Source information:
The data come from the RNA Mapping Database (RMDB), library M2PK90. Structure probing data (2A3 and DMS) for a 177-nucleotide construct. The 2A3 profile rests on 10,629 reads. Conditions: 150 mM KOAc, 10 mM MgCl2 and 150 mM bicine (pH 8.5), 24 C.
[RMDB]
RNA sequence: GGGAACGACUCGAGUAGAGUCGAAAAGUUAUGGAAAACGUCUUAGCUACCACUACAACAACAAUGCUGGACGGUGAUGGUUCGACUUACUCGAAACCAUCACGUAGUGGUAGUCGAUCCCAUUCAAUGUUGUACAUUCUUUCGAGAAUGUACAACAAAAAGAAACAACAACAACAAC
Reactivity to 2A3 in 0.01 (KOAc 150mM, MgCl2 10mM, bicine 150mM(pH8.5), 24C), signal-to-noise 7, nucleotides 027 to 126: g020u040u040a060u220g140g070a130a160a040a030c020g030u010c050u060u090a030g000c000u000a000c000c000a010c020u010a000c010a130a000c000a030a020c040a130a240u250g090c100u120g110g080a070c090g050g000u000g000a000u000g000g000u010u000c000g000a050c070u120u230a070c040u080c010g020a070a020a040c000c000a000u000c000a000c020g000u010a000g000u000g000g000u000a000g000u000c000g010a010u000c010c010c000a000u080u080c070a060a110
Reactivity to DMS in 0.01 (KOAc 150mM, MgCl2 10mM, bicine 150mM(pH8.5), 24C), signal-to-noise 7, nucleotides 027 to 126: g010u000u000a090u010g010g020a120a060a060a060c100g000u000c040u000u000a160g000c000u000a010c010c000a020c010u000a020c010a100a110c120a070a090c180a070a120u000g020c100u000g010g020a100c160g020g030u000g000a010u000g000g010u000u000c000g000a030c280u000u010a100c270u000c010g010a030a040a050c010c000a010u000c000a000c030g010u000a010g000u000g000g000u000a010g010u000c050g000a070u000c000c000c010a110u010u010c110a070a140

For DMS the reverse transcriptase was MarathonRT.